RNA sequence: GGGAACGACUCGAGUAGAGUCGAAAAGGAUUUGAUUGGACCCAGGGUAGCGAGAGAAAUGAGGGGACAAGGCAUACACAUAGUGCAUAAGCAGGAAGACUCAUGACAUCAUACAUUUCUAGAACAGGACAGAUCUUCAAAAACAUGAACUGCAAGAAGUGAUUUAAAUGUUCGCAUUUAAAUCACUAAAAGAAACAACAACAACAAC
Reactivity to DMS in 0.01 (KOAc 150mM, MgCl2 10mM, bicine 150mM(pH8.5), 24C), signal-to-noise 4, nucleotides 027 to 156: g010g030a090u000u010u000g000a160u000u010g010g020a100c050c030c020a170g000g010g010u000a060g020c070g000a100g020a130g000a070a120a090u000g000a130g000g020g020g030a100c040a040a050g010g000c030a120u000a070c050a070c030a080u000a110g030u000g030c020a070u000a090a130g000c050a040g020g000a040a090g000a090c020u000c030a090u000g010a120c050a060u000c050a120u000a060c070a100u000u000u000c030u010a070g000a080a050c050a070g010g020a140c040a080g000a060u000c030u000u000c040a030a050a070a060a070c070a060u000g010a070a100c090u000g000c030a040a090g000a100
Reactivity to 2A3 in 0.01 (KOAc 150mM, MgCl2 10mM, bicine 150mM(pH8.5), 24C), signal-to-noise 6, nucleotides 027 to 156: g050g020a080u050u060u090g080a090u060u110g020g020a040c020c030c040a050g010g020g020u050a040g020c050g030a030g000a010g020a060a070a080u140g010a050g000g010g000g010a010c030a040a020g050g000c020a030u070a070c050a010c010a110u140a050g050u040g020c020a020u040a160a010g010c020a030g060g000a030a020g010a020c010u010c060a020u090g020a060c010a060u080c020a010u070a100c010a040u060u090u030c030u070a040g020a110a030c020a050g010g060a010c010a020g030a080u010c000u100u050c080a080a100a020a020a020c030a050u100g020a050a020c040u060g000c040a030a020g080a070